An RNA of 177 nucleotides, treated with 2A3 and DMS and read out base by base.
The DMS profile rests on 1,809 reads.
For 2A3, 1,476 sequencing reads were counted.

[RMDB]
RNA sequence: GGGAACGACUCGAGUAGAGUCGAAAAUUAACCUCUAAAUCGAUAAGCCGUCAGUGUCCGAUGGGGUACUGAUUGUGAUGACGAUAGUAAGUCAGCAGGUGGAAACACUUUGUGCGUGGGUUAGGUAGACAAUUGUAGACUUCGGUCUACAAUUGUCAAAAGAAACAACAACAACAAC
Reactivity to 2A3 in 0.01 (KOAc 150mM, MgCl2 10mM, bicine 150mM(pH8.5), 24C), signal-to-noise 1, nucleotides 027 to 126: u030u000a000a010c000c020u000c050u040a110a130a110u110c010g010a020u010a010a040g010c020c010g010u000c000a010g000u010g010u000c000c000g220a300u190g090g050g000g010u000a000c000u020g000a000u000u010g000u000g020a020u050g010a000c010g010a030u000a040g130u060a150a020g040u010c020a010g000c000a000g000g030u010g010g020a040a020a010c020a010c000u200u300u160g030u020g000c010g010u060g000g020g010u040u010a030g000g100u030a020
Reactivity to DMS in 0.01 (KOAc 150mM, MgCl2 10mM, bicine 150mM(pH8.5), 24C), signal-to-noise 2, nucleotides 027 to 126: u020u000a060a060c010c000u010c100u000a010a060a090u010c010g010a040u000a130a300g000c000c030g000u000c000a010g010u000g020u020c000c000g020a250u010g000g010g020g000u000a010c010u000g000a010u000u000g040u010g010a060u000g010a050c000g000a100u010a130g000u000a090a120g010u010c020a030g000c010a030g000g010u000g000g000a110a060a160c020a000c010u000u000u000g030u000g000c040g010u000g020g010g010u000u010a010g030g010u000a100